This 177-nucleotide RNA was probed chemically with DMS and 2A3. For 2A3, 2,627 sequencing reads were counted. Source: RMDB library TTRDES, as collected in RNAgym. In probing experiments dimethyl sulfate is read out at A N1 and C N3, which are open when not base-paired.

RNA sequence: GGGAACGACUCGAGUAGAGUCGAAAAAAAGAUAUGGAUCGCAGGCUCUUGGAUUUAUAGGCAAGAUGAGUAUGUCGGAAACGACAUAUUGAGCCUAUUGUCAGAGCCCUGCGAUCCUAAGUCAAAAGAAGUUAUAUCUGUUCGCAGAUAUAACUUCAAAAGAAACAACAACAACAAC
Reactivity to DMS in 0.01 (KOAc 150mM, MgCl2 10mM, bicine 150mM(pH8.5), 24C), signal-to-noise 2, nucleotides 027 to 126: a070a090a120g000a050u000a300u020g010g010a030u000c000g010c000a060g000g020c010u000c010u030u020g000g010a040u010u000u000a000u000a010g030g020c000a070a170g000a270u020g010a100g010u000a000u010g000u000c000g010g010a080a080a240c010g010a010c000a000u000a000u000u000g020a240g010c010c000u010a010u000u000g000u010c020a030g000a010g000c150c030c010u000g000c000g010a000u000c000c000u000a010a060g010u000c030a070a090a150a200
Reactivity to 2A3 in 0.01 (KOAc 150mM, MgCl2 10mM, bicine 150mM(pH8.5), 24C), signal-to-noise 2, nucleotides 027 to 126: a020a000a020g070a000u100a060u140g000g000a000u010c000g000c020a000g000g010c020u030c060u300u300g100g000a020u160u300u250a010u080a010g020g000c060a080a030g150a300u190g010a040g090u020a020u020g000u010c010g000g000a030a160a100c000g010a000c010a010u000a020u020u020g030a010g000c000c000u000a010u010u000g010u000c020a010g000a010g010c000c000c000u000g000c000g000a000u000c000c000u010a000a000g000u030c000a000a000a080a100